[RMDB]
Record summary
The record gives the reactivity of an RNA of 177 nucleotides to DMS.

RNA sequence: GGGAACGACUCGAGUAGAGUCGAAAAGUGUCGAAAUAAGGCGUAAGCCUGUGAACCAUUAUAAGCGAUUGAUUGUGUGCUGAGUGGAAAGACUUGGUGCAUAAAGUUGCAUAUAGUAUUGAAAAUAGGUAGUAGGAAUCUUCGGAUUCCUACUACCAAAAGAAACAACAACAACAAC
Reactivity to DMS in 0.01 (KOAc 150mM, MgCl2 10mM, bicine 150mM(pH8.5), 24C), signal-to-noise 1, nucleotides 027 to 126: g010u020g010u000c060g010a110a060a080u010a080a010g040g020c000g000u020a160a170g010c000c000u000g000u000g000a120a140c120c030a020u020u000a010u010a020a070g020c000g020a010u000u000g010a050u010u010g050u020g010u000g000c000u000g000a010g030u000g010g020a180a080a160g000a030c000u000u010g030g040u000g010c000a010u000a030a070a140g010u000u010g010c020a070u010a010u010a010g010u000a090u010u010g000a030a020a070a080u000a040

The RNA was probed in 150 mM KOAc, 10 mM MgCl2 and 150 mM bicine (pH 8.5) at 24 C.